The data come from the RNA Mapping Database (RMDB), library OK1LIB. An RNA of 177 nucleotides, treated with DMS and 2A3 and read out base by base. The RNA was probed in 150 mM KOAc, 10 mM MgCl2 and 150 mM bicine (pH 8.5) at 24 C. For 2A3 the reverse transcriptase was SuperScript II with manganese.
RNA sequence: GGGAACGACUCGAGUAGAGUCGAAAAUAUCGAAGUCGGCGCUAUUGAAUACCCGUGUAUGGCGUUGCUGAGAGGGACAUGCACUGCCAUGUCGGGCGGUGUAUCAAGCCCUAGCGUUGGCUAGAAAAGUCUCAGUACGAUUCGUCGUGCUGGGGCUAAAAGAAACAACAACAACAAC
Reactivity to DMS in 0.01 (KOAc 150mM, MgCl2 10mM, bicine 150mM(pH8.5), 24C), signal-to-noise 9, nucleotides 027 to 126: u030a060u010c040g000a090a060g030u000c010g010g000c010g010c010u010a050u020u010g010a130a070u020a090c020c010c020g020u020g020u020a050u020g000g010c060g010u000u010g000c050u010g010a140g010a080g010g000g010a070c130a050u010g010c010a010c010u000g000c000c000a070u020g020u040c230g000g000g010c020g000g000u000g010u010a010u010c120a090a130g000c020c030c050u000a030g010c030g020u000u000g010g000c020u000a100g000a060a070a090
Reactivity to 2A3 in 0.01 (KOAc 150mM, MgCl2 10mM, bicine 150mM(pH8.5), 24C), signal-to-noise 6, nucleotides 027 to 126: u140a010u020c020g020a030a000g010u000c000g000g000c000g000c010u010a020u040u110g050a040a030u070a080c000c000c010g010u050g030u040a060u050g020g010c050g020u040u060g010c040u050g030a090g020a050g090g050g030a020c020a020u080g000c000a000c010u030g000c010c010a070u120g100u150c030g000g030g000c000g000g000u050g000u010a040u030c010a000a020g010c000c000c000u000a000g000c000g000u000u000g010g000c000u000a010g040a000a090a010